[RMDB]
RNA sequence: GGGAACGACUCGAGUAGAGUCGAAAAGGGUUUCGCCUGCAUUGUGCGAUCGUCGGAUAUGCGUCGGUGCUGAGCGGUCAGUGAGCUAAGACUUUCGGGCGCUAAUAAGAACCCCGCCCCAGCAUCACAUGUUGCAUCGAUUCGUCGAUGCAACAUGAAAAGAAACAACAACAACAAC
Reactivity to 2A3 in 0.01 (KOAc 150mM, MgCl2 10mM, bicine 150mM(pH8.5), 24C), signal-to-noise 2, nucleotides 027 to 126: g020g010g000u000u070u010c010g040c050c010u010g030c050a060u060u110g000u090g090c020g040a040u040c050g130u050c020g060g080a000u020a010u240g030c020g070u040c040g050g030u020g000c010u030g070a030g020c020g030g170u010c050a010g010u010g110a000g040c050u190a210a060g020a230c000u030u030u010c040g010g000g040c000g000c050u020a100a070u130a210a070g040a010a010c010c000c010c000g000c020c000c000c000a010g060c010a020u190c050a010
Reactivity to DMS in 0.01 (KOAc 150mM, MgCl2 10mM, bicine 150mM(pH8.5), 24C), signal-to-noise 2, nucleotides 027 to 126: g010g020g010u010u000u000c040g000c060c030u000g010c080a060u000u000g060u020g040c000g020a040u000c040g050u000c210g020g010a020u000a030u000g000c070g030u000c050g000g010u000g010c020u000g010a100g020c020g000g020u000c040a100g050u000g020a030g010c060u000a100a130g010a120c020u000u000u010c030g010g000g020c020g000c130u000a070a080u020a110a100g010a040a110c020c030c030c030g010c210c000c010c080a110g000c100a060u000c100a160
Record summary:
Structure probing data (2A3 and DMS) for a 177-nucleotide construct. 2A3 adducts were read by reverse transcription with SuperScript II with manganese. Source: RMDB library OK2TRN, as collected in RNAgym.